[RMDB]
RNA sequence: GGGAACGACUCGAGUAGAGUCGAAAAUUUAUAAGAAUAGACACCCAGAGUCACGAUUCGUUUUUCGGAUGAAAUAUGCCAGUGAACGUAUAUAUUCCAUUCGUGGAAUCAUACGGUAGGAUACUCGACCAGAUGACUGUUUCGACAGUCAUCUGGUAAAAGAAACAACAACAACAAC
Reactivity to DMS in 0.01 (KOAc 150mM, MgCl2 10mM, bicine 150mM(pH8.5), 24C), signal-to-noise 2, nucleotides 027 to 126: u010u030u050a080u020a160a120g000a040a020u080a180g010a080c110a080c030c050c040a130g000a080g010u010c010a080c020g000a060u000u030c100g000u000u000u000u030u000c070g000g000a010u000g000a050a070a120u020a040u040g040c000c020a100g010u000g040a030a120c000g000u000a020u010a090u010a000u010u010c000c000a050u000u060c110g020u010g000g000a040a010u000c300a040u000a040c010g000g000u000a020g000g000a150u040a050c040u000c290g000
Reactivity to 2A3 in 0.01 (KOAc 150mM, MgCl2 10mM, bicine 150mM(pH8.5), 24C), signal-to-noise 1, nucleotides 027 to 126: u050u110u030a250u010a030a050g040a100a020u180a200g070a000c000a010c000c000c040a000g000a000g020u020c060a010c090g040a100u070u000c000g110u120u060u000u180u180c070g040g020a000u040g030a000a110a000u100a060u210g010c020c030a060g030u010g160a060a020c000g010u000a000u000a000u000a000u030u000c040c020a020u000u120c270g090u060g000g000a000a000u000c000a000u000a100c000g000g070u050a120g070g010a020u000a130c040u130c040g060